RNA sequence: GGGAACGACUCGAGUAGAGUCGAAAACUUCCUAGGUCCGGAGUCUAUCUCCAUCUGGUCUGUUCGGGCCCUCUUCGCCGGGGGAGCCCCCUCUCCAUCCUUAUCCUUCUUUCCAAGAAUUCCUUUGAUGUUUCCUAGCCAGGGAUUCUCGUCCUCUUCGGAUAUUUAUGUUCGCAUAAAUAUCCGAAAAAGAAACAACAACAACAAC
Reactivity to 2A3 in 0.01 (KOAc 150mM, MgCl2 10mM, bicine 150mM(pH8.5), 24C), signal-to-noise 2, nucleotides 027 to 156: c010u040u030c000c000u020a090g000g010u040c080c070g000g000a020g080u030c090u270a160u090c040u040c040c020a020u020c080u090g030g010u010c030u040g120u090u180c100g000g000g000c000c000c010u020c040u190u120c030g040c050c020g010g010g000g000g000a030g000c000c010c010c010c000u000c020u000c040c030a060u000c020c000u120u100a100u040c010c010u050u130c000u050u120u060c120c010a080a040g020a100a110u010u070c020c010u120u120u130g080a050u110g070u050u090u040c010c010u070a030g080c050c020a020g040g010g000a000u010u000c050u010c060g010u030c000c030u070c030u050